[RMDB]
RNA sequence: GGGAACGACUCGAGUAGAGUCGAAAAGAUAUGGAGCAAAGGGAGCAGGAUCACUAUCCAUUAUAUGUUCGGAAACGAACAUAUAAUGGCCGAGGUGCGCACUGCGACGAUCUUUGCUCCUAAGUCAGAACUCGAGAGAGUUCGCUCUCUCGAGUUCAAAAGAAACAACAACAACAAC
Reactivity to DMS in 0.01 (KOAc 150mM, MgCl2 10mM, bicine 150mM(pH8.5), 24C), signal-to-noise 2, nucleotides 027 to 126: g000a100u000a300u000g000g010a050g000c000a010a010a020g030g000g000a040g020c000a000g000g010a270u000c060a040c000u000a240u020c000c020a000u010u020a020u000a020u000g000u000u000c000g000g000a170a070a200c000g000a040a020c000a010u010a000u000a000a000u020g000g000c300c220g010a050g000g020u020g040c300g020c300a250c000u010g000c000g000a120c170g040a020u000c000u000u000u000g000c000u000c000c000u000a000a110g000u020c060a150

Structure probing data (DMS) for a 177-nucleotide construct. Reactivities are given for positions 27 through 126. Source: RMDB library TTRINS, as collected in RNAgym. For DMS, 890 sequencing reads were counted. DMS adducts were read by reverse transcription with MarathonRT. Conditions: 150 mM KOAc, 10 mM MgCl2 and 150 mM bicine (pH 8.5), 24 C.